The record gives the reactivity of an RNA of 207 nucleotides to DMS and 2A3. For 2A3 the reverse transcriptase was SuperScript II with manganese. The data come from the RNA Mapping Database (RMDB), library M2RFPK. For 2A3, 478 sequencing reads were counted. The reactions ran in a buffer of 150 mM KOAc, 10 mM MgCl2 and 150 mM bicine (pH 8.5), at 24 C. DMS adducts were read by reverse transcription with MarathonRT. The DMS profile rests on 1,767 reads.
[RMDB]
RNA sequence: GGGAACGACUCGAGUAGAGUCGAAAACGUUGUCAUCGACAACACCCUAUGGAUUCAUGCUCUGUAAGGAUGCGCCGAAAGGUGAGCAAGCCCGAGUUGCCCAGACCUGAAAUGCAACACUUUAGAGAAAACCCGAAGCAGUUCGCUGCUUCGGGAAUCCUAUAGCGAUCUUCGGAUCGCUAUAGGAAAAAGAAACAACAACAACAAC
Reactivity to DMS in 0.01 (KOAc 150mM, MgCl2 10mM, bicine 150mM(pH8.5), 24C), signal-to-noise 1, nucleotides 027 to 156: c070g000u050u000g010u000c030a180u000c070g000a060c030a080a040c010a030c010c000c010u010a090u010g000g000a060u020u000c100a100u010g000c190u000c010u000g050u000a080a060g000g010a050u000g010c070g040c010c050g000a090a100a100g020g020u000g010a090g000c060a140a100g020c020c070c100g010a220g000u000u010g060c020c060c030a140g000a060c010c040u000g030a060a100a070u000g000c010a040a060c060a060c020u010u000u000a010g000a240g010a050a040a120a160c030c000c000g000a010a100g030c010a060g050u000u000c290g020c000u000g010c020u010u000c000g000g030g020a010a000
Reactivity to 2A3 in 0.01 (KOAc 150mM, MgCl2 10mM, bicine 150mM(pH8.5), 24C), signal-to-noise 1, nucleotides 027 to 156: c050g000u000u000g010u020c080a200u090c300g000a000c000a000a000c000a030c000c000c000u020a060u160g010g040a060u080u070c020a040u130g020c000u010c010u000g090u090a030a040g050g000a020u050g080c080g030c040c010g090a110a060a000g000g000u040g050a030g010c000a000a060g060c000c020c050g070a040g080u000u020g040c020c010c030a010g010a100c020c070u080g010a150a000a000u110g020c020a060a000c060a090c250u080u160u170a040g040a020g000a050a220a010a000c000c000c000g000a040a000g050c000a000g000u040u110c070g030c140u000g000c010u000u000c010g010g000g000a000a010